[RMDB]
Conditions: 150 mM KOAc, 10 mM MgCl2 and 150 mM bicine (pH 8.5), 24 C.
This 177-nucleotide RNA was probed chemically with DMS and 2A3.
The DMS profile rests on 2,778 reads.
It was measured as part of the RMDB library OK2TST.

RNA sequence: GGGAACGACUCGAGUAGAGUCGAAAAAGGGCUCUUCCUGGAAGGUUUGUGGUCCCCACAGGACCAGGCCAACUCUGACCGUGCCAGCAUUGGCCGACGGAGGACCGAGCUGAGACGCAGUGGCAGCCGCUCCAUGCUUAUUCGUAAGCAUGGAGCGAAAAGAAACAACAACAACAAC
Reactivity to DMS in 0.01 (KOAc 150mM, MgCl2 10mM, bicine 150mM(pH8.5), 24C), signal-to-noise 3, nucleotides 027 to 126: a100g010g000g020c030u000c020u000u000c010c000u000g000g000a140a140g010g020u000u000u000g010u000g020g000u000c020c000c090c160a130c210a150g010g010a040c020c010a060g000g010c050c020a100a120c070u010c010u000g020a130c080c050g040u010g010c030c000a030g000c240a160u000u000g020g000c020c010g020a060c050g010g000a070g000g000a080c080c040g010a090g010c020u000g000a080g010a090c090g000c040a070g020u010g000g000c070a120g020c120
Reactivity to 2A3 in 0.01 (KOAc 150mM, MgCl2 10mM, bicine 150mM(pH8.5), 24C), signal-to-noise 2, nucleotides 027 to 126: a000g110g010g020c050u030c020u080u060c030c040u030g090g010a080a060g130g000u030u190u200g170u080g010g000u070c030c030c040c010a130c020a050g000g010a010c000c000a010g010g020c010c000a030a040c000u000c000u040g040a150c030c030g070u140g080c020c030a070g020c120a260u100u100g020g000c000c000g000a030c030g010g010a020g000g000a020c040c020g020a030g020c010u030g000a010g020a100c050g000c080a010g000u060g100g000c010a020g020c000